RNA sequence: GGGAACGACUCGAGUAGAGUCGAAAAGGCUAUCGAGCGACCACACGGUGAGCAUAGACUGCAACAACGAACCUGUUUCGCACCGCACAGGCACCAGCAUUUCGCUGGGUAUAGAUCAGCGUAAGUCUUACGUCUUUAACUUCCACAAGUACGAAGAUACCGUUUCAGAAUUCGUUCUGAAACGGUAAAAAGAAACAACAACAACAAC
Reactivity to DMS in 0.01 (KOAc 150mM, MgCl2 10mM, bicine 150mM(pH8.5), 24C), signal-to-noise 2, nucleotides 027 to 156: g060g050c020u000a090u000c040g020a170g020c010g000a080c030c070a100c080a070c110g020g030u000g010a070g000c130a190u010a100g000a070c030u000g050c010a120a070c040a060a100c060g000a040a030c090c060u010g030u000u000u010c010g010c000a050c010c040g020c060a100c080a050g030g000c020a100c000c020a040g030c000a300u000u000u030c170g060c000u000g000g000g000u000a100u000a090g010a090u000c020a100g040c040g020u010a060a090g010u010c030u010u000a030c050g010u010c000u000u000u000a080a090c070u010u010c000c030a060c030a130a110g040u020a120c080g010a050a100g010a280
Reactivity to 2A3 in 0.01 (KOAc 150mM, MgCl2 10mM, bicine 150mM(pH8.5), 24C), signal-to-noise 4, nucleotides 027 to 156: g050g000c000u010a010u140c080g020a030g010c030g040a060c000c000a040c010a010c070g050g010u080g020a060g000c020a040u050a140g100a110c040u030g010c030a060a080c020a060a030c080g050a020a050c000c040u050g060u010u050u070c070g000c020a020c010c030g020c020a030c010a050g030g000c040a070c000c000a000g010c040a080u130u220u220c120g000c000u010g020g000g020u020a080u070a010g080a040u080c030a010g020c020g050u070a050a020g010u000c020u040u030a050c030g030u010c010u060u090u050a100a080c030u080u020c040c050a100c030a130a040g120u110a030c080g020a020a030g020a050